[RMDB]
RNA sequence: GGGAACGACUCGAGUAGAGUCGAAAACGCACCGGCCCUUCACAUGCUGCGUGUGUCCAUAUAAGAAAACCCCUUUUAAUGAGAAGCAAUAUAGUUAUGAACUCUCUAGAGCCAUAAUUAGAGCAAAGCUGUGGAUUUAUUUCGAUAAAUCCACAGCAAAAGAAACAACAACAACAAC
Reactivity to 2A3 in 0.01 (KOAc 150mM, MgCl2 10mM, bicine 150mM(pH8.5), 24C), signal-to-noise 4, nucleotides 027 to 126: c010g000c020a000c010c000g010g020c020c000c000u230u200c070a130c020a120u200g000c010u020g010c030g040u030g000u000g010u000c010c030a100u140a020u020a150a070g190a060a070a040a040c000c040c000c000u040u080u040u190a150a180u130g080a050g060a240a040g040c050a120a000u090a020u020a110g010u030u010a010u020g060a060a060c000u000c000u000c090u120a130g010a000g000c020c000a010u010a010a010u030u050a010g040a020g050c040a080a040a000
Reactivity to DMS in 0.01 (KOAc 150mM, MgCl2 10mM, bicine 150mM(pH8.5), 24C), signal-to-noise 2, nucleotides 027 to 126: c020g020c050a070c030c070g020g060c000c110c070u020u010c160a090c170a160u010g000c020u020g040c180g000u040g000u000g000u000c050c120a080u020a050u030a010a050g030a090a090a070a070c030c020c030c010u010u020u020u000a100a060u020g000a150g000a170a120g010c050a100a180u040a110u000a070g000u000u000a000u000g040a140a300c000u000c000u030c080u040a070g010a050g000c140c010a000u000a000a010u000u000a000g040a190g000c050a020a090a110
Structure probing data (2A3 and DMS) for a 177-nucleotide construct.
The RNA was probed in 150 mM KOAc, 10 mM MgCl2 and 150 mM bicine (pH 8.5) at 24 C.
Values are in units of 0.01, from 0 to 300, in steps of 10.
For 2A3 the reverse transcriptase was SuperScript II with manganese.